[RMDB]
RNA sequence: GGGAACGACUCGAGUAGAGUCGAAAACCUGCCAAGUCUUAGAAGCUUUAAGAUUCAUCGCAUUGAACUUGAUACGUAUAGUACAGCACCUUGAAAACAAAUCAUCUGCUAGUUCAGUAUUUUCUACACGCUACGAAGCAUUCGUGCUUCGUAGCGUAAAAGAAACAACAACAACAAC
Reactivity to 2A3 in 0.01 (KOAc 150mM, MgCl2 10mM, bicine 150mM(pH8.5), 24C), signal-to-noise 2, nucleotides 027 to 126: c020c000u030g010c020c000a040a000g040u060c010u000u090a060g040a200a000g000c000u050u180u130a120a040g030a100u000u140c060a030u030c060g080c020a060u000u020g020a050a020c020u040u080g040a000u020a010c080g040u070a150u090a180g080u090a050c010a010g000c000a060c000c010u060u170g010a020a000a040a150c140a000a190a070u130c020a030u010c000u050g050c000u020a010g030u000u000c020a000g040u030a130u010u050u000u000c040u000a040c050
Source: RMDB library RFM100, as collected in RNAgym. The record gives the reactivity of an RNA of 177 nucleotides to 2A3. High 2A3 reactivity points to a flexible backbone, as in loops and unpaired stretches. The RNA was probed in 150 mM KOAc, 10 mM MgCl2 and 150 mM bicine (pH 8.5) at 24 C. The 2A3 profile rests on 690 reads.